The data come from the RNA Mapping Database (RMDB), library OK1LIB. Chemical mapping of a 177-nucleotide RNA with 2A3 and DMS. The DMS profile rests on 2,086 reads. The RNA was probed in 150 mM KOAc, 10 mM MgCl2 and 150 mM bicine (pH 8.5) at 24 C.
[RMDB]
RNA sequence: GGGAACGACUCGAGUAGAGUCGAAAAAAAGGAUGGAUACUUAAAGAUUUACCCAUUACAUUUGGCGUAAUGAUAUUACCUUCAAGUUGGUGUGCAAUUAAUGUAAUGAUACAAACCCAUAUAAAUGUCAUAUGAGCAGCUUCGGCUGCUCAUAUGAAAAAGAAACAACAACAACAAC
Reactivity to 2A3 in 0.01 (KOAc 150mM, MgCl2 10mM, bicine 150mM(pH8.5), 24C), signal-to-noise 2, nucleotides 027 to 126: a000a000a040g190g030a100u100g000g000a000u170a180c020u020u300a020a070a000g040a070u160u080u030a220c000c000c000a000u050u000a000c000a140u030u030u050g010g000c120g020u120a190a000u030g000a040u040a180u150u030a030c000c000u010u090c040a000a300g020u050u110g140g000u000g050u070g010c010a220a230u220u070a020a030u070g000u040a050a050u000g000a000u060a130c020a000a030a020c040c000c000a030u040a030u050a300a240a080u260g040
Reactivity to DMS in 0.01 (KOAc 150mM, MgCl2 10mM, bicine 150mM(pH8.5), 24C), signal-to-noise 2, nucleotides 027 to 126: a020a040a090g000g030a090u000g000g000a070u000a020c100u050u000a050a080a100g000a140u000u010u000a080c030c040c020a000u030u030a000c030a050u010u000u010g040g000c200g000u000a050a040u020g020a150u010a130u000u020a070c030c010u000u040c060a060a060g010u000u000g000g010u030g020u010g000c080a080a080u020u000a060a050u000g000u000a040a000u000g000a050u000a080c180a000a070a250c010c020c010a060u090a100u000a030a050a130u010g000